[RMDB]
RNA sequence: GGGAACGACUCGAGUAGAGUCGAAAAUUACUAGUCUGUGAUGAAUUGCUUUGACUUCUGACACCUCGUAUGAAAACUGCACGUGCAGUGUGAUUAUUUAGCAAGACUGAGGCUUAAAAUAAAUCAAAUCAGUUCAUCAAUUCGUUGAUGAACUGAUAAAAGAAACAACAACAACAAC
Reactivity to DMS in 0.01 (KOAc 150mM, MgCl2 10mM, bicine 150mM(pH8.5), 24C), signal-to-noise 3, nucleotides 027 to 126: u020u020a070c040u000a070g020u010c010u010g010u000g000a060u000g010a100a080u000u000g040c070u010u010u020g000a070c080u000u010c070u010g000a100c100a060c050c010u000c090g000u000a030u000g000a110a070a080a070c030u000g010c030a080c300g020u000g030c020a030g010u000g010u000g000a080u000u000a040u000u010u000a040g000c030a070a060g000a080c090u000g000a080g040g000c020u000u000a040a020a020a040u000a050a080a080u010c070a050a080
Reactivity to 2A3 in 0.01 (KOAc 150mM, MgCl2 10mM, bicine 150mM(pH8.5), 24C), signal-to-noise 2, nucleotides 027 to 126: u040u040a080c020u020a020g070u000c000u010g140u060g110a110u040g080a110a160u030u010g020c030u090u030u090g090a130c020u080u040c020u040g050a060c020a050c040c040u010c050g010u110a050u070g030a020a030a100a130c020u020g000c040a000c160g110u150g060c020a020g030u020g010u010g050a060u010u030a020u050u060u040a010g000c010a070a010g010a020c060u100g060a020g070g000c000u030u060a080a020a040a020u140a030a090a000u100c060a020a000